Source: RMDB library RFMREP, as collected in RNAgym. The record gives the reactivity of an RNA of 177 nucleotides to DMS and 2A3.

RNA sequence: GGGAACGACUCGAGUAGAGUCGAAAAUAGCCGGCCUUAGUCAACUAAGGGAUCUGCGUCAACAUUCUUGGCCCGCAGGCCAUGGUGCAGAUAGUCGCAAGACUUGGCGAGACCAUCGCUCAAAUGAGACUAGGAACAAGUUCGCUUGUUCCUAGUCAAAAGAAACAACAACAACAAC
Reactivity to DMS in 0.01 (KOAc 150mM, MgCl2 10mM, bicine 150mM(pH8.5), 24C), signal-to-noise 2, nucleotides 027 to 126: u000a170g040c010c010g020g010c000c030u010u000a010g000u070c300a170a120c010u010a000a030g000g000g000a020u000c000u000g010c030g000u010c050a040a090c150a200u020u000c190u000u000g020g010c000c000c300g000c200a130g030g020c000c000a050u000g000g000u000g000c060a060g000a030u000a010g000u000c000g020c260a130a100g000a030c000u000u000g020g030c000g000a120g000a160c050c060a060u020c110g000c030u010c060a110a050a090u010g000a260
Reactivity to 2A3 in 0.01 (KOAc 150mM, MgCl2 10mM, bicine 150mM(pH8.5), 24C), signal-to-noise 2, nucleotides 027 to 126: u080a010g030c000c010g040g010c000c000u050u030a020g020u060c090a120a150c280u020a020a000g000g000g020a010u020c010u010g000c000g020u070c040a090a080c000a260u210u090c050u090u070g010g000c020c050c100g220c210a110g020g000c020c000a050u000g000g000u010g000c020a000g000a010u010a000g000u000c010g010c080a090a040g020a000c000u010u010g030g000c010g000a000g030a000c000c010a070u050c090g110c120u070c110a050a140a080u130g020a030

For DMS, 1,209 sequencing reads were counted. For 2A3 the reverse transcriptase was SuperScript II with manganese.